[RMDB]
RNA sequence: GGGAACGACUCGAGUAGAGUCGAAAAGGAGGUGGAGAUGCCAUGCCGACCCGAAGAGGAAAGAAGGACGCGAGACGCAAACCCGUGAGUGGAUACCCGUUUAUUCACUGGGGUCGACAACUCUGGGCUAGUUAAGAUGGUUCGCCAUCUUAACUAGAAAAGAAACAACAACAACAAC
Reactivity to DMS in 0.01 (KOAc 150mM, MgCl2 10mM, bicine 150mM(pH8.5), 24C), signal-to-noise 5, nucleotides 027 to 126: g000g000a060g010g020u000g000g010a100g000a080u000g010c040c050a070u000g000c020c020g010a100c030c020c040g010a080a080g010a100g000g000a060a050a070g010a090a070g000g000a050c080g010c070g020a050g000a070c090g020c100a060a080a120c030c010c010g000u010g000a030g020u000g010g000a040u000a070c050c080c080g000u000u010u000a040u020u000c050a010c050u010g000g000g000g000u010c050g010a050c110a070a080c070u000c020u000g000g000g000
Reactivity to 2A3 in 0.01 (KOAc 150mM, MgCl2 10mM, bicine 150mM(pH8.5), 24C), signal-to-noise 3, nucleotides 027 to 126: g040g000a030g030g040u080g020g040a080g010a050u140g070c020c020a020u090g000c000c020g070a080c000c010c030g020a030a030g030a020g020g060a090a070a010g050a050a030g050g000a010c030g010c040g070a060g010a030c030g000c080a040a060a080c020c000c010g060u070g040a010g010u040g040g000a010u110a170c020c020c020g010u100u090u060a110u090u090c050a020c070u090g010g010g000g000u010c020g030a050c010a100a040c000u010c030u060g010g000g020

An RNA of 177 nucleotides, treated with DMS and 2A3 and read out base by base.
For 2A3 the reverse transcriptase was SuperScript II with manganese.
For DMS the reverse transcriptase was MarathonRT.
Reactivities are given for positions 27 through 126.
Values are in units of 0.01, from 0 to 300, in steps of 10.
The data come from the RNA Mapping Database (RMDB), library VIROID.
For DMS, 5,839 sequencing reads were counted.